[RMDB]
RNA sequence: GGGAACGACUCGAGUAGAGUCGAAAAGACAGAUAAGGUAACUUCUGCUGUCUCUGACCUCACAGUCAGAGCCUCAGGUUUCCUUUGCUCCUGAACAGCCCUGCAUCUUCCCCAAGCAGCUUCCUGCUUGGUGCCUCCUCCAGCCUUUGUAUAUACAUAUAAUUAUAGCAUUCGUGCUAUAAUUAUAAAAAGAAACAACAACAACAAC
Reactivity to 2A3 in 0.01 (KOAc 150mM, MgCl2 10mM, bicine 150mM(pH8.5), 24C), signal-to-noise 2, nucleotides 027 to 156: g020a000c000a000g060a090u170a140a030g020g010u020a040a020c000u170u160c020u080g000c030u000g070u030c000u000c000u010g000a010c030c010u110c030a050c050a020g010u000c000a010g000a000g000c000c000u000c010a000g000g000u000u010u060c010c020u000u020u040g040c030u040c010c000u020g050a060a030c000a030g020c000c000c000u030g000c030a080u000c020u060u080c060c000c010c020a010a000g040c000a000g020c090u120u040c040c010u030g000c030u010u000g020g000u020g000c030c000u000c000c020u020c020c000a010g040c020c000u110u110u140g110u160a090u260a110u300a150c300a040
Reactivity to DMS in 0.01 (KOAc 150mM, MgCl2 10mM, bicine 150mM(pH8.5), 24C), signal-to-noise 1, nucleotides 027 to 156: g020a180c050a100g000a180u000a030a040g020g000u000a020a040c000u000u010c030u000g000c090u000g010u000c000u020c010u010g000a030c020c020u010c300a120c190a110g040u000c010a020g020a020g000c030c030u000c020a030g020g000u000u010u000c030c020u010u000u010g010c030u000c000c000u030g000a070a090c050a130g000c050c000c020u000g010c040a110u010c050u000u000c020c030c010c030a030a070g020c020a050g040c120u000u000c130c020u010g020c030u000u020g040g040u000g000c000c040u000c010c010u000c030c010a160g000c030c020u010u020u010g000u000a160u010a180u000a140c030a230